Chemical mapping of a 177-nucleotide RNA with DMS and 2A3. The 2A3 profile rests on 11,496 reads.
RNA sequence: GGGAACGACUCGAGUAGAGUCGAAAAGCGGUUUUUGCAAAAGCAUCAUCCGGAAAAAGUUGCUGCUUACGAAGCGCAACUAGCGCUAGAAGAAUAAAUAACGUAGACUUGGCAGACGGCAAAAUAGGACGUAAAAUAGUUUCGACUAUUUUACGUCAAAAGAAACAACAACAACAAC
Reactivity to DMS in 0.01 (KOAc 150mM, MgCl2 10mM, bicine 150mM(pH8.5), 24C), signal-to-noise 5, nucleotides 027 to 126: g000c040g010g020u000u000u000u000u000g000c040a110a080a090a140g020c030a030u010c030a060u020c030c020g020g020a060a040a100a070a040g010u000u000g000c010u020g020c010u000u010a110c210g000a130a060g020c010g040c000a070a060c130u020a030g010c040g020c020u000a070g000a090a100g000a060a070u040a040a060a090u020a050a090c080g020u000a080g000a060c090u020u020g000g000c020a050g000a080c050g000g000c080a060a030a050a080u050a110g000
Reactivity to 2A3 in 0.01 (KOAc 150mM, MgCl2 10mM, bicine 150mM(pH8.5), 24C), signal-to-noise 8, nucleotides 027 to 126: g070c020g020g030u040u060u050u140u120g070c060a120a090a020a040g010c000a020u040c010a010u000c020c020g070g020a050a090a010a010a000g020u020u020g000c100u050g000c000u040u040a100c170g160a110a010g000c000g000c010a020a070c040u030a030g020c040g000c050u040a030g060a090a010g070a090a060u190a130a080a040u150a050a020c060g040u040a040g040a060c020u010u060g030g000c000a010g020a100c020g010g000c030a060a030a080a030u140a110g150
About this RNA: DMS adducts were read by reverse transcription with MarathonRT. Source: RMDB library OK1LIB, as collected in RNAgym.